[RMDB]
RNA sequence: GGGAACGACUCGAGUAGAGUCGAAAAUUCGAGAGUUGGGGGAUAGAAAGAGGGCGAAUUUCCUCGGGAGGAUCCCCCAAGCUUCCAACAGGCAAGCAACAAGAUAGAGGAGCCCCCAUGACGCUGGUGAGCUUCCCGUUCGCGGGAAGCAAAAGAAACAACAACAACAAC
Reactivity to DMS in 0.01 (KOAc 150mM, MgCl2 10mM, bicine 150mM(pH8.5), 24C), signal-to-noise 2, nucleotides 027 to 129: u000u000c050g010a010g000a080g050u030u000g040g020g050g010g030a080u050a040g020a040a300a160g010a000g020g000g000c300g010a020a020u000u000u000c000c000u010c000g000g090g010a180g060g030a000u010c040c020c020c060c000a000a010g040c020u000u010c040c060a100a140c280a100g020g060c050a040a010g030c060a120a000c120a060a050g010a070u030a000g010a080g000g000a050g000c000c000c040c070c010a080u040g030a060c300g010c150u010g030g000u000g040a140
Reactivity to 2A3 in 0.01 (KOAc 150mM, MgCl2 10mM, bicine 150mM(pH8.5), 24C), signal-to-noise 1, nucleotides 027 to 129: u130u040c030g010a040g000a030g090u050u000g000g000g000g000g000a000u000a000g040a150a050a000g060a030g000g020g010c180g150a000a080u030u060u020c000c050u000c020g000g000g000a090g010g000a000u000c000c000c000c000c000a020a020g000c000u040u000c000c000a060a050c000a000g030g050c020a040a000g050c010a020a020c000a080a000g010a020u080a020g020a060g070g000a000g040c010c000c000c010c010a010u040g050a060c110g020c080u090g000g080u120g020a000

Annotation: An RNA of 170 nucleotides, treated with DMS and 2A3 and read out base by base. For DMS the reverse transcriptase was MarathonRT. 2A3 adducts were read by reverse transcription with SuperScript II with manganese. For DMS, 5,473 sequencing reads were counted. Conditions: 150 mM KOAc, 10 mM MgCl2 and 150 mM bicine (pH 8.5), 24 C. Reactivities are given for positions 27 through 129. Values are in units of 0.01, from 0 to 300, in steps of 10.